[RMDB]
RNA sequence: GGGAACGACUCGAGUAGAGUCGAAAACGUGCGUACUGGGCCGCCGGCACAAUGUUCGACCCAGCCGUCUCAGAGGUCGCGGUUCGACAACGAUCAGCCAGCUGGUCAGCGGGGUCCUCCUAGCUAGCGUAUGAUUAUCGUUCGCGAUAAUCAUACGAAAAGAAACAACAACAACAAC
Reactivity to DMS in 0.01 (KOAc 150mM, MgCl2 10mM, bicine 150mM(pH8.5), 24C), signal-to-noise 5, nucleotides 027 to 126: c110g020u010g010c050g020u000a060c100u010g010g000g020c050c050g020c070c030g000g020c040a080c130a090a130u000g000u010u000c040g010a060c030c000c020a120g020c060c010g000u000c120u010c180a100g010a130g010g020u000c020g020c110g000g000u010u000c040g010a040c070a090a120c140g000a030u000c080a060g000c040c080a110g000c020u000g030g000u010c030a070g010c050g000g000g000g000u000c010c020u010c010c030u000a080g010c070u000a080g010
Reactivity to 2A3 in 0.01 (KOAc 150mM, MgCl2 10mM, bicine 150mM(pH8.5), 24C), signal-to-noise 3, nucleotides 027 to 126: c030g030u060g010c010g060u080a100c040u080g000g010g010c030c050g090c010c000g070g020c050a030c010a090a160u140g030u140u080c030g020a050c000c000c000a010g010c020c010g090u030c050u020c140a110g060a090g130g000u070c030g030c100g080g000u050u060c020g000a010c010a100a040c060g010a050u040c000a000g040c060c020a060g030c030u040g000g040u010c000a010g020c020g000g010g000g010u030c010c000u010c000c010u020a070g040c030u030a030g070

The record gives the reactivity of an RNA of 177 nucleotides to DMS and 2A3. For 2A3 the reverse transcriptase was SuperScript II with manganese. For DMS, 5,501 sequencing reads were counted. The RNA was probed in 150 mM KOAc, 10 mM MgCl2 and 150 mM bicine (pH 8.5) at 24 C. Source: RMDB library OK2TRN, as collected in RNAgym. The 2A3 profile rests on 6,921 reads.